[RMDB]
RNA sequence: GGGAACGACUCGAGUAGAGUCGAAAAUUCUUGCUCUUGCCAUUUGUUUAUGUGAUUAUGGUAACUCACUGCCCUUCCCGGUUCCCCACUUCCCAGCUUUGACAUAGUCCUAACUACACAUCCUUUCUAUGGAGUCCACCAGUGAGCCUGAAUUCACUCUAUUAUGUAGGUUCGCCUACAUAAUAGAAAAAGAAACAACAACAACAAC
Reactivity to DMS in 0.01 (KOAc 150mM, MgCl2 10mM, bicine 150mM(pH8.5), 24C), signal-to-noise 3, nucleotides 027 to 156: u000u000c030u000u000g030c010u000c040u000u010g010c000c050a130u000u000u000g010u000u000u000a040u020g020u010g010a110u010u000a060u000g020g000u000a050a090c050u010c020a060c040u000g010c010c030c010u000u000c000c010c010g000g020u000u000c020c010c020c030a070c080u000u000c020c010c000a160g010c050u000u000u000g010a110c060a090u000a060g020u000c030c040u000a060a080c040u000a080c040a040c050a100u000c020c020u010u000u000c060u000a100u000g010g000a100g020u010c020c030a060c100c020a110g030u000g000a070g050c010c040u010g010a100a120u000u010c040a060c090
Reactivity to 2A3 in 0.01 (KOAc 150mM, MgCl2 10mM, bicine 150mM(pH8.5), 24C), signal-to-noise 5, nucleotides 027 to 156: u060u010c020u020u070g040c020u030c030u060u050g030c010c020a110u070u070u110g120u080u140u120a170u120g080u070g060a060u060u130a060u120g040g010u040a070a070c020u020c060a030c040u060g020c010c030c010u010u020c020c010c010g020g030u030u030c010c010c000c000a030c040u030u030c020c000c010a040g040c030u060u080u080g040a030c020a060u060a020g040u020c000c020u040a070a060c020u080a040c050a010c000a080u050c010c000u060u130u040c020u080a090u110g020g000a030g030u030c010c030a040c020c010a070g010u030g040a000g010c010c020u030g030a040a040u060u060c040a020c030
Conditions: 150 mM KOAc, 10 mM MgCl2 and 150 mM bicine (pH 8.5), 24 C. This 207-nucleotide RNA was probed chemically with DMS and 2A3. The 2A3 profile rests on 2,975 reads. Reactivities are given for positions 27 through 156. The DMS profile rests on 10,752 reads.